Source: RMDB library M2RFPK, as collected in RNAgym.
The record gives the reactivity of an RNA of 207 nucleotides to DMS and 2A3.
The RNA was probed in 150 mM KOAc, 10 mM MgCl2 and 150 mM bicine (pH 8.5) at 24 C.
For 2A3, 2,169 sequencing reads were counted.
RNA sequence: GGGAACGACUCGAGUAGAGUCGAAAAACCAAGUCUGGGGGCCGGUGAGGGUUGGCUCAAAGUAGGGUUUUGACUUGAAAACUCAAGCUGUGACCCCAAAACGAUGGAGGUAAAUGAGAAUCCUCCUAAAACUAUGGACACUUCGGUGUCCAUAGAACUGACAUAGUAACUUCGGUUACUAUGUCAGAAAAGAAACAACAACAACAAC
Reactivity to DMS in 0.01 (KOAc 150mM, MgCl2 10mM, bicine 150mM(pH8.5), 24C), signal-to-noise 1, nucleotides 027 to 156: a080c040c010a140a190g000u000c020u000g000g000g070g060g000c070c000g000g000u000g000a300g010g010g040u000u010g040g000c090u000c010a040a060a060g010u000a160g040g020g030u000u000u000u000g000a030c120u010u000g000a060a090a060a040c060u020c000a000a300g040c020u000g040u030g000a060c000c000c010c020a010a090a060a110c060g040a140u020g040g010a040g060g020u000a010a080a090u010g000a300g000a190a140u000c000c030u000c010c000u030a020a060a040a130c000u000a010u000g020g000a010c000a010c010u000u000c300g060g020u000g010u000c000c010a010u010a010g000a050a160
Reactivity to 2A3 in 0.01 (KOAc 150mM, MgCl2 10mM, bicine 150mM(pH8.5), 24C), signal-to-noise 3, nucleotides 027 to 156: a010c020c000a040a010g060u030c040u110g010g020g000g010g040c010c020g070g000u020g010a060g000g030g000u040u040g010g000c030u020c020a080a080a050g160u150a110g050g070g050u080u070u070u110g050a040c030u050u100g080a110a070a030a030c020u010c000a000a000g000c000u050g060u240g170a280c030c030c000c020a010a060a000a000c040g040a060u150g000g000a000g010g000u070a120a130a110u210g020a060g050a130a030u050c000c000u000c000c000u000a010a000a000a030c000u000a000u000g010g000a000c000a010c000u020u050c210g090g000u000g000u000c000c000a000u000a010g000a000a010